[RMDB]
RNA sequence: GGGAACGACUCGAGUAGAGUCGAAAAGGCUCCCACUUCGGUGGGAGCCAAAGCUGAACGCGCAGCAAGCGUUUAACAUGGAAAAACGCACGUCCAAUGCGCAAAGCUUCCCCUUCGGGGGAAGCAACUUGAAUCUUUUGUUCGCAAAAGAUUCAAGAAAAGAAACAACAACAACAAC
Reactivity to DMS in 0.01 (KOAc 150mM, MgCl2 10mM, bicine 150mM(pH8.5), 24C), signal-to-noise 2, nucleotides 027 to 126: g000g020c010u000c000c000c010a000c000u000u030c130g020g030u000g000g010g000a010g010c000c000a000a010a120g010c080u000g010a050a140c060g020c000g000c050a050g000c090a140a170g000c010g010u000u000u010a060a100c140a180u000g000g010a110a090a030a020a010c010g000c000a060c130g000u000c040c030a070a050u000g010c000g010c080a060a130a070g000c000u000u000c000c000c000c000u010u010c190g010g000g000g000g010a000a000g000c000a010a010
Reactivity to 2A3 in 0.01 (KOAc 150mM, MgCl2 10mM, bicine 150mM(pH8.5), 24C), signal-to-noise 2, nucleotides 027 to 126: g000g020c000u030c040c030c000a000c000u030u070c190g080g000u000g010g020g030a000g010c010c000a020a000a000g010c000u010g020a050a000c030g010c000g000c020a010g010c030a060a070g020c000g010u020u020u040a140a050c090a160u300g080g100a160a070a000a010a020c010g010c020a010c050g010u000c030c030a060a080u090g010c000g010c000a050a060a070g040c050u010u000c000c000c000c000u000u080c210g040g000g000g000g000a000a000g000c010a000a020